Structure probing data (2A3 and DMS) for a 207-nucleotide construct.
2A3 adducts were read by reverse transcription with SuperScript II with manganese.
2A3 is a SHAPE reagent: it acylates the 2'-hydroxyl of flexible nucleotides of all four kinds.
Conditions: 150 mM KOAc, 10 mM MgCl2 and 150 mM bicine (pH 8.5), 24 C.
The data come from the RNA Mapping Database (RMDB), library OK3TST.
[RMDB]
RNA sequence: GGGAACGACUCGAGUAGAGUCGAAAAUGGUUCCAUACAAGUGGAACACUGCUGUAGGUGCGAGCGUUAAGCUGCAACUGGAAUCCGUGAUGCUGGUCGAACUGGCUACCUUUGGUGGCGGUGAAGACGAUUGGGCUGACGAAGUUGAAGAGAACGGAUGGUGAACAUGAUUCGUCAUGUUCACCAUAAAAGAAACAACAACAACAAC
Reactivity to 2A3 in 0.01 (KOAc 150mM, MgCl2 10mM, bicine 150mM(pH8.5), 24C), signal-to-noise 2, nucleotides 027 to 156: u210g030g010u000u010c030c000a060u150a140c150a180a080g050u010g020g010a010a010c020a030c000u150g060c020u070g020u130a030g030g000u070g040c070g140a020g020c000g040u100u180a110a020g040c040u040g020c010a050a090c040u000g050g030a080a030u030c020c010g030u020g050a060u130g040c040u030g020g010u020c020g030a030a010c000u020g100g000c030u080a070c000c000u140u100u300g080g000u010g010g000c000g030g000u000g050a050a000g070a000c000g000a020u100u090g030g020g010c040u020g000a030c030g030a070a040g050u070u080g040a090a020g100a050g030a070a020c010g050g000
Reactivity to DMS in 0.01 (KOAc 150mM, MgCl2 10mM, bicine 150mM(pH8.5), 24C), signal-to-noise 2, nucleotides 027 to 156: u010g010g030u000u000c000c000a070u000a140c250a070a190g060u010g010g000a050a020c020a070c070u000g010c020u010g040u000a150g020g040u000g000c050g040a080g030c040g000u000u010a080a140g010c040u010g010c030a040a070c030u000g020g020a120a070u000c040c030g030u000g000a100u000g000c030u000g030g010u000c040g000a100a120c030u000g000g000c000u000a030c040c040u010u000u050g070g090u000g020g030c020g010g060u000g020a100a110g000a130c030g020a110u000u000g020g020g020c000u000g020a130c050g010a040a140g000u010u000g010a120a140g000a070g000a080a080c080g020g020